[RMDB]
RNA sequence: GGGAACGACUCGAGUAGAGUCGAAAAGAUAUGGACGAGAAACGCGUUGAUCCCGGAAUGUGUACGUAACAUCAGUCGGAAACGACUGUGGUACACAUUCCGGGGGAGCGUAACUCGUCCUAAGUCACUUAUAGUCUCUCUUCGGAGAGACUAUAAGAAAAGAAACAACAACAACAAC
Reactivity to DMS in 0.01 (KOAc 150mM, MgCl2 10mM, bicine 150mM(pH8.5), 24C), signal-to-noise 4, nucleotides 027 to 126: g000a040u000a300u010g010g010a010c010g000a010g010a060a300a020c000g030c000g020u000u010g000a030u000c000c000c000g020g000a010a000u000g000u000g000u000a010c000g040u010a080a150c240a040u010c010a010g020u000c010g000g000a130a140a220c000g000a020c010u010g010u000g010g010u000a000c000a000c010a000u000u000c000c010g010g000g000g010g000a010g010c010g000u000a010a160c000u000c000g010u000c000c000u000a010a090g000u000c040a300
Reactivity to 2A3 in 0.01 (KOAc 150mM, MgCl2 10mM, bicine 150mM(pH8.5), 24C), signal-to-noise 3, nucleotides 027 to 126: g060a000u080a050u200g000g010a000c000g000a010g000a020a260a010c000g020c010g280u300u040g010a010u000c010c010c000g000g000a000a010u000g010u000g000u010a000c060g070u200a200a120c070a290u300c030a030g000u010c000g000g060a090a090a070c010g000a010c000u000g010u020g000g020u000a000c010a010c010a000u000u000c000c000g010g030g000g000g000a010g010c000g010u000a010a000c000u000c000g000u000c000c010u000a000a000g010u020c010a010
Overview:
Structure probing data (DMS and 2A3) for a 177-nucleotide construct. As a SHAPE reagent, 2A3 marks flexible, mostly unpaired nucleotides at the ribose 2'-OH. Values cover nucleotides 27 to 126.